[RMDB]
RNA sequence: GGGAACGACUCGAGUAGAGUCGAAAACUGCGUGGUGAUGGAAGCGUGUGGAGGAGCGAACCAUUGGUAUCGGACGUUUAUGGGGAUGGGUAUCCCAACGCAGUUGAUCAGUCCGCAGCACGUCAAAGUGCCGAUAUUUAUUCGUAAAUAUCGGCACAAAAGAAACAACAACAACAAC
Reactivity to DMS in 0.01 (KOAc 150mM, MgCl2 10mM, bicine 150mM(pH8.5), 24C), signal-to-noise 7, nucleotides 027 to 126: c020u000g020c020g020u010g020g010u000g010a060u010g010g010a090a140g010c100g020u010g020u000g000g020a150g010g010a120g010c050g010a090a110c040c050a110u010u010g020g020u000a090u020c060g010g000a090c070g000u000u010u010a100u010g010g000g010g010a060u010g010g010g020u000a110u000c010c010c020a080a050c060g020c030a030g010u000u010g000a100u000c090a100g010u010c030c020g020c060a060g010c140a050c100g010u000c070a060a100a140
Reactivity to 2A3 in 0.01 (KOAc 150mM, MgCl2 10mM, bicine 150mM(pH8.5), 24C), signal-to-noise 6, nucleotides 027 to 126: c010u010g000c010g020u060g030g050u080g040a070u040g020g070a070a030g040c040g030u100g060u090g070g050a080g020g020a060g030c020g020a030a030c010c010a070u050u140g090g010u120a090u160c060g030g030a020c030g030u030u070u090a120u120g030g000g010g020a030u050g030g010g090u080a040u030c000c000c010a010a010c020g000c000a010g010u020u030g000a030u040c020a010g110u010c010c020g020c050a010g020c020a010c050g060u080c060a070a040a080